[RMDB]
RNA sequence: GGGAACGACUCGAGUAGAGUCGAAAAGGGCCGUUCACUGGAUCCGAAGCCUCUAGAAGGAUAAUAUAGGCACUCCAUACCCUACUCCGACUCAAUACGUCCCCGUCGUACAGAAUGGUAACAUAGCGAACACAACCUAACUUCGGUUAGGUUGUAACAAACCUUAGAGAUUCGUCUCUAAGGUUUGAAAAGAAACAACAACAACAAC
Reactivity to DMS in 0.01 (KOAc 150mM, MgCl2 10mM, bicine 150mM(pH8.5), 24C), signal-to-noise 2, nucleotides 027 to 156: g010g020g060c020c000g040u000u020c000a170c070u030g030g000a060u010c030c060g010a170a300g010c000c050u010c030u020a120g010a160a070g000g000a100u000a100a100u010a150u010a100g030g010c030a060c060u000c040c040a170u000a050c040c010c010u000a110c070u000c060c000g010a060c030u000c020a100a140u000a150c000g000u000c000c000c000c030g040u010c040g000u020a140c050a080g010a080a090u000g020g000u000a100a120c080a100u010a060g010c040g000a080a060c070a080c000a000a000c000c000u000a000a020c000u010u000c300g070g020u000u000a000g020g010u010u010g000u000a020a070
Reactivity to 2A3 in 0.01 (KOAc 150mM, MgCl2 10mM, bicine 150mM(pH8.5), 24C), signal-to-noise 3, nucleotides 027 to 156: g030g000g020c120c050g180u180u150c120a090c160u050g040g000a090u230c010c030g020a040a020g020c050c000u020c040u110a180g030a260a050g120g010a010u070a230a050u120a120u120a130g020g000c030a030c090u000c000c000a050u060a100c000c000c010u020a030c060u040c040c010g010a010c000u010c010a070a080u110a170c010g000u010c020c010c000c010g050u050c000g010u020a050c010a030g140a080a190u090g070g000u040a100a000c030a080u060a060g060c040g040a060a000c000a000c000a040a000c000c000u000a010a000c000u030u050c070g000g020u000u000a010g000g010u010u000g000u010a000a000